[RMDB]
An RNA of 170 nucleotides, treated with DMS and 2A3 and read out base by base. The DMS profile rests on 6,680 reads.
RNA sequence: GGGAACGACUCGAGUAGAGUCGAAAAAAGAGGCUGUAAGGCAAGUUCGAAGCUGGAUAGGCUUCGAUGUUGAGGGUGCUCAUGCUUCCCGUAAUGCAUGUGGCACCAAUGUGCCUCUACAAUUAGGAUCGCCUCGGCUUCGGCCGAGGCAAAAGAAACAACAACAACAAC
Reactivity to DMS in 0.01 (KOAc 150mM, MgCl2 10mM, bicine 150mM(pH8.5), 24C), signal-to-noise 2, nucleotides 027 to 129: a060a040g000a000g030g030c020u040g020u040a000a000g010g040c060a130a100g010u070u000c020g010a060a070g000c050u020g080g050a290u090a140g010g010c000u000u030c040g000a010u030g060u030u000g000a220g010g030g000u010g060c040u000c010a050u020g020c000u060u000c000c050c120g020u000a090a020u000g030c000a020u000g030u030g030g020c030a010c010c020a060a080u010g010u030g030c010c000u030c050u010a050c130a020a060u000u000a060g020g020a000u020c200
Reactivity to 2A3 in 0.01 (KOAc 150mM, MgCl2 10mM, bicine 150mM(pH8.5), 24C), signal-to-noise 3, nucleotides 027 to 129: a000a080g000a040g040g030c030u040g010u090a020a020g030g060c010a030a040g060u050u000c000g000a000a000g000c050u060g030g120a210u180a210g040g000c000u000u000c000g000a000u010g040u000u070g020a130g150g000g000u000g000c000u010c010a000u000g020c000u040u040c010c000c000g050u200a040a010u080g020c000a000u000g040u130g080g000c010a000c000c000a000a020u090g010u050g030c000c000u000c000u010a010c030a050a060u210u140a000g040g080a040u150c040